[RMDB]
RNA sequence: GGGAACGACUCGAGUAGAGUCGAAAACGUAUCAUUCCUGCAAAGGCACGUGUUGAGUGCUAUGACAGGUUUAAAGUUAAUGAGACAAAUUCUCAAUAUUUGUUUAGUACUAUUAAUGCUCUACCAGACCGCCCCUGGUUCGCCAGGGGCAAAAGAAACAACAACAACAAC
Reactivity to DMS in 0.01 (KOAc 150mM, MgCl2 10mM, bicine 150mM(pH8.5), 24C), signal-to-noise 4, nucleotides 027 to 129: c140g000u000a070u050c020a060u020u000c000c020u050g030c100a080a140a300g010g020c000a030c030g020u100g070u000u000g070a230g060u030g000c060u010a120u040g080a250c020a010g000g080u000u040u000a100a090a060g020u070u060a100a010u020g010a000g000a000c000a010a070a070u010u050c180u030c060a100a080u010a040u070u000u000g000u060u070u020a100g040u120a100c050u000a050u050u000a070a040u000g020c010u020c160u050a030c090c120a040g000a000c000c050
Reactivity to 2A3 in 0.01 (KOAc 150mM, MgCl2 10mM, bicine 150mM(pH8.5), 24C), signal-to-noise 3, nucleotides 027 to 129: c050g040u010a000u300c030a040u070u080c000c010u000g000c030a030a010a050g030g000c000a020c000g090u180g160u100u170g200a110g050u000g000c000u050a010u040g150a090c000a000g010g000u060u130u190a040a040a010g010u000u080a110a050u040g040a000g010a020c020a000a010a000u110u010c140u040c000a090a030u210a070u100u060u030g060u010u010u040a000g080u010a020c070u000a070u240u070a030a010u080g030c000u040c000u080a010c000c060a020g070a080c010c000